[RMDB]
RNA sequence: GGGAACGACUCGAGUAGAGUCGAAAACUCGUCCGCAGGCGGUUUCGUAUCAGCAAUGUGCCACACAAGCGGUUUAGUAAACCGGUUUUUACACACAAAUUUCACAUUAUUUUGCACGCGGUUUAGGCGGUACCUGGACUUUCGAGUCCAGGUACCGAAAAGAAACAACAACAACAAC
Reactivity to DMS in 0.01 (KOAc 150mM, MgCl2 10mM, bicine 150mM(pH8.5), 24C), signal-to-noise 1, nucleotides 027 to 126: c000u000c020g050u000c100c000g000c050a050g000g000c080g000g000u000u000u030c020g000u040a080u000c000a060g060c160a000a120u000g000u000g000c020c120a170c230a000c260a140a050g000c010g000g000u000u000u000a070g000u070a020a160a000c070c060g010g070u030u000u130u000u010a120c210a160c230a030c040a000a140a150u030u000u000c100a030c120a130u000u090a000u060u060u010u010g140c100a090c000g020c000g000g030u010u000u030a140g030g000
Reactivity to 2A3 in 0.01 (KOAc 150mM, MgCl2 10mM, bicine 150mM(pH8.5), 24C), signal-to-noise 2, nucleotides 027 to 126: c000u020c000g030u040c030c010g030c140a090g020g080c000g060g000u010u030u130c070g060u080a030u100c040a010g000c000a000a100u150g080u110g110c000c000a010c000a060c100a000a120g070c000g030g030u000u000u230a080g010u040a000a000a070c020c000g020g030u040u070u190u140u200a070c100a010c000a010c050a010a100a120u090u130u040c090a120c020a010u000u130a150u050u200u190u150g100c070a060c020g010c010g000g000u000u000u050a070g050g000